The data come from the RNA Mapping Database (RMDB), library OK2TRN. The record gives the reactivity of an RNA of 177 nucleotides to DMS. For DMS the reverse transcriptase was MarathonRT.

RNA sequence: GGGAACGACUCGAGUAGAGUCGAAAAGAAGGAGACGCUGUAACUCUUAUUCUCAUUGAAUAGAACUGGAGAUAGAGUUACAGUCUCCAGUAACAGACAAUGAGAGUCUGUUGCGUCUCCUAGGCUAUGUGAGGAAGCUAUUCGUAGCUUCCUCACAAAAAGAAACAACAACAACAAC
Reactivity to DMS in 0.01 (KOAc 150mM, MgCl2 10mM, bicine 150mM(pH8.5), 24C), signal-to-noise 1, nucleotides 027 to 126: g010a240a050g000g010a010g020a010c010g000c010u000g010u000a100a030c130u000c010u000u010a030u000u010c010u020c010a010u010u000g000a040a160u000a080g020a290a040c020u000g000g000a010g000a040u000a080g000a110g000u010u000a090c110a150g000u020c020u000c000c000a050g000u010a040a140c090a020g000a190c010a050a040u020g000a040g010a040g050u000c050u000g020u000u000g020c010g010u010c000u000c000c010u000a020g010g000c170u000a030